Record summary:
The data come from the RNA Mapping Database (RMDB), library OK3TST. Structure probing data (2A3 and DMS) for a 207-nucleotide construct. The 2A3 profile rests on 2,979 reads.
RNA sequence: GGGAACGACUCGAGUAGAGUCGAAAACUCAUAGCUGACAAGCUCCAGAAUGAACGAGAGUACCGGCUGGACUGGGCCAAAUGGAAGGCCAAGAUCCAGAGCCCUGUGGACAUGCUUUCCAUCCUGCACUCUAAAAAUUCCCAGGCUCUGGUCAGUACUAAAUCAGGAUGUUCGCAUCCUGAUUUAGAAAAGAAACAACAACAACAAC
Reactivity to 2A3 in 0.01 (KOAc 150mM, MgCl2 10mM, bicine 150mM(pH8.5), 24C), signal-to-noise 5, nucleotides 027 to 156: c020u020c020a040u140a060g020c010u030g020a040c030a100a030g010c020u030c020c000a080g040a160a150u130g040a130a030c060g030a050g010a000g150u040a060c040c060g020g040c030u030g010g030a040c030u040g020g050g010c020c020a050a080a110u150g070g030a080a040g020g010c010c000a020a020g050a100u030c000c000a010g010a040g050c030c010c040u090g030u170g040g020a040c030a110u130g030c030u100u060u000c030c010a070u080c020c030u030g020c020a040c040u060c000u120a030a090a040a090a140u060u030c010c010c000a000g000g010c000u000c020u020g020g000u000c010a010g000u020a070
Reactivity to DMS in 0.01 (KOAc 150mM, MgCl2 10mM, bicine 150mM(pH8.5), 24C), signal-to-noise 2, nucleotides 027 to 156: c040u010c020a140u000a100g030c010u000g010a110c070a140a130g010c020u000c040c060a120g010a120a100u000g010a050a110c050g000a110g000a120g000u000a040c010c030g010g090c020u000g000g000a090c050u000g010g020g020c040c030a040a140a110u000g010g000a130a180g000g010c010c090a050a100g000a180u010c000c010a030g000a040g020c000c010c040u000g030u000g020g020a080c050a080u000g000c070u010u000u000c040c010a070u000c050c020u000g020c020a030c000u030c010u000a020a080a080a060a150u000u010c020c020c040a140g000g000c010u010c010u010g010g010u010c000a130g000u000a110